[RMDB]
RNA sequence: GGGAACGACUCGAGUAGAGUCGAAAAUAUUACAUCUUCGGAUGUAAUAACUGGUGGUGGCUGGCUUGUUGCUAGUGGCGCAACAGUUGCCAUGACUGCGCAAUCGCUCUGAAUUCGUUCAGAGCAAUCACGGCUGAUUAUUCGUAAUCAGCCGUGAAAAAGAAACAACAACAACAAC
Reactivity to DMS in 0.01 (KOAc 150mM, MgCl2 10mM, bicine 150mM(pH8.5), 24C), signal-to-noise 1, nucleotides 027 to 126: u000a000u010u000a020c000a000u000c000u000u020c300g000g000a030u010g010u000a010a000u000a010a110c110u020g020g020u000g000g020u000g000g020c010u000g010g010c050u020u010g000u000u000g010c010u000a200g020u010g000g020c160g000c010a030a030c010a020g010u000u000g010c000c000a030u020g000a020c040u000g000c120g000c110a110a090u010c120g010c010u000c000u010g010a020a020u010u010c220g010u000u010c000a000g000a000g010c000a010a020
Reactivity to 2A3 in 0.01 (KOAc 150mM, MgCl2 10mM, bicine 150mM(pH8.5), 24C), signal-to-noise 1, nucleotides 027 to 126: u020a000u000u020a000c010a010u000c000u010u000c280g110g000a010u020g000u030a000a000u020a030a050c060u080g080g000u020g000g000u010g000g070c020u000g010g000c010u070u130g000u000u050g040c050u080a100g070u100g300g020c080g030c010a000a050c010a010g020u110u060g000c000c010a010u030g070a040c050u030g000c080g000c090a020a090u130c070g010c000u010c000u030g000a020a040u040u040c100g030u100u010c010a000g030a000g020c000a000a000